[RMDB]
RNA sequence: GGGAACGACUCGAGUAGAGUCGAAAAGAGAUGUCUAUGCGCCCCAACCGCUCACCGAGCACAUAGGCAACGCCCGUCGACGGGUGGUCGGCCGCUGCAGCAAUGCGCAACAGCGACGUCUUGCCGAUCCGGGGAUAAUGUUCGCAUUAUCCCCGGAAAAAGAAACAACAACAACAAC
Reactivity to DMS in 0.01 (KOAc 150mM, MgCl2 10mM, bicine 150mM(pH8.5), 24C), signal-to-noise 1, nucleotides 027 to 126: g000a120g020a100u000g010u000c000u010a030u000g000c040g010c020c010c030c070a120a190c100c090g000c050u000c030a040c130c150g020a070g000c000a130c030a010u000a020g000g000c020a070a110c070g020c000c000c010g000u000c100g000a090c090g020g000g020u010g030g020u010c030g060g000c020c020g010c020u000g030c080a070g010c070a130a160u010g030c140g020c030a100a030c040a020g000c010g010a050c040g000u000c010u020u010g000c000c060g000a080
Reactivity to 2A3 in 0.01 (KOAc 150mM, MgCl2 10mM, bicine 150mM(pH8.5), 24C), signal-to-noise 1, nucleotides 027 to 126: g040a010g010a040u040g030u040c030u020a050u070g100c000g090c030c000c030c030a000a070c010c040g000c030u040c020a160c030c170g050a000g030c060a010c020a040u040a010g010g000c020a050a030c030g050c010c010c060g120u200c070g100a180c040g050g000g020u040g090g020u000c010g020g030c040c020g000c050u040g010c000a070g010c020a060a260u240g040c070g000c050a030a090c020a070g060c000g040a030c050g050u000c080u100u080g060c020c000g000a030
This 177-nucleotide RNA was probed chemically with DMS and 2A3.
The reactions ran in a buffer of 150 mM KOAc, 10 mM MgCl2 and 150 mM bicine (pH 8.5), at 24 C.
DMS adducts were read by reverse transcription with MarathonRT.
For 2A3 the reverse transcriptase was SuperScript II with manganese.
For 2A3, 1,220 sequencing reads were counted.